The record gives the reactivity of an RNA of 177 nucleotides to 2A3 and DMS. The reactions ran in a buffer of 150 mM KOAc, 10 mM MgCl2 and 150 mM bicine (pH 8.5), at 24 C. 2A3 adducts were read by reverse transcription with SuperScript II with manganese.

RNA sequence: GGGAACGACUCGAGUAGAGUCGAAAAGGCUUGCUCAAUUUGAACUGGUCAUUCUUUCAGUAAGCUUUAGUUUGAGCACCAAGAAGUAAGUUUUGUAGGGAACUGGAUGAAUGUAAAGACUAUUUGCCUACCUGAUCGAUUUCGAUCGAUCAGGUAGAAAAGAAACAACAACAACAAC
Reactivity to 2A3 in 0.01 (KOAc 150mM, MgCl2 10mM, bicine 150mM(pH8.5), 24C), signal-to-noise 2, nucleotides 027 to 126: g000g010c040u020u030g000c010u020c080a090a170u120u050u190g030a040a030c010u050g010g060u090c010a030u030u030c010u020u040u030c010a030g020u050a080a010g000c000u030u030u090a060g060u010u110u160g060a020g000c010a030c070c020a020a030g080a010a000g050u190a040a040g010u040u000u170u190g140u100a060g040g050g020a040a000c000u020g040g050a020u050g040a030a000u030g000u130a070a120a000g040a020c020u060a090u120u090u080g000c000
Reactivity to DMS in 0.01 (KOAc 150mM, MgCl2 10mM, bicine 150mM(pH8.5), 24C), signal-to-noise 3, nucleotides 027 to 126: g020g000c020u000u000g010c020u010c110a080a060u000u010u000g010a070a060c050u000g030g010u000c050a300u000u000c000u000u000u000c090a040g030u000a080a040g000c000u000u000u000a100g020u000u020u000g020a100g010c040a230c030c020a070a100g000a060a100g000u000a030a060g000u010u000u000u010g030u000a140g010g000g000a050a050c040u000g000g000a060u000g000a070a060u010g010u000a060a060a100g010a080c060u000a100u000u010u010g030c240